RNA sequence: GGGAACGACUCGAGUAGAGUCGAAAAACGCUCAUGAGUGACAUGACGUGAUUGCGUACUGUCACACAGUACGGGCCGAUUGGAAACAAUCCAGACGUCACGUAGUCGUGUUUCCAACGAUUAGCGAGCUGAGGAUAGUAUUCGUACUAUCCUCAGCAAAAGAAACAACAACAACAAC
Reactivity to 2A3 in 0.01 (KOAc 150mM, MgCl2 10mM, bicine 150mM(pH8.5), 24C), signal-to-noise 7, nucleotides 027 to 126: a000c020g010c010u020c010a050u060g040a020g180u110g050a040c000a030u080g010a000c000g020u040g150a300u110u300g020c010g000u020a060c010u020g050u070c010a020c000a010c000a080g010u010a010c010g000g040g030c050c020g060a060u020u030g010g030a070a060a050c020a030a090u010c010c020a030g020a100c030g020u030c000a010c110g040u050a020g010u020c000g000u010g020u030u050u000c010c000a020a020c010g010a030u040u030a020g060c050g030a050
Reactivity to DMS in 0.01 (KOAc 150mM, MgCl2 10mM, bicine 150mM(pH8.5), 24C), signal-to-noise 7, nucleotides 027 to 126: a090c050g010c020u000c030a070u000g010a230g020u000g000a060c010a020u000g010a010c000g020u000g010a160u010u020g010c010g010u000a030c040u000g000u010c160a090c070a300c030a030g000u000a020c030g000g010g020c080c060g010a090u000u000g000g000a070a120a150c130a050a070u000c020c060a080g000a180c120g010u000c040a020c060g010u010a020g010u000c000g010u000g010u000u000u010c030c020a090a020c020g010a030u010u000a030g000c020g000a170
An RNA of 177 nucleotides, treated with 2A3 and DMS and read out base by base. The 2A3 profile rests on 13,179 reads. DMS (dimethyl sulfate) methylates the pairing face of unpaired adenines and cytosines.